[RMDB]
RNA sequence: GGGAACGACUCGAGUAGAGUCGAAAAAGUUUCUCGAUAAUUGAUCUGUAGAAUCUGUCAAGCAAAACCCCAAUACCUUACACUGAGAGCAUUUAGCCUGAUUACUCUUUAAAUCAAAUCAGGCAAUUCAAGGUCGCAGUCUUCGGACUGCGACCAACGUUGAAGGUUAGUUCGCUAACCUUCAACGAAAAGAAACAACAACAACAAC
Reactivity to 2A3 in 0.01 (KOAc 150mM, MgCl2 10mM, bicine 150mM(pH8.5), 24C), signal-to-noise 2, nucleotides 027 to 156: a010g010u000u010u010c040u030c040g030a150u130a280a160u190u190g020a040u000c050u130g190u080a060g050a100a030u020c020u100g060u080c050a070a000g010c030a120a120a130a150c000c040c000c000a010a010u070a060c000c080u130u100a040c080a010c090u200g080a000g000a000g020c010a010u000u010u050a050g010c000c000u000g000a000u000u010a020c000u000c060u260u280u030a010a010a010u170c080a010a000a000u010c000a010g020g010c000a000a000u040u010c000a000a070g000g010u030c000g010c000a010g000u000c000u010u040c080g090g000a000c040u000g100c040g000a000c000c000a000a000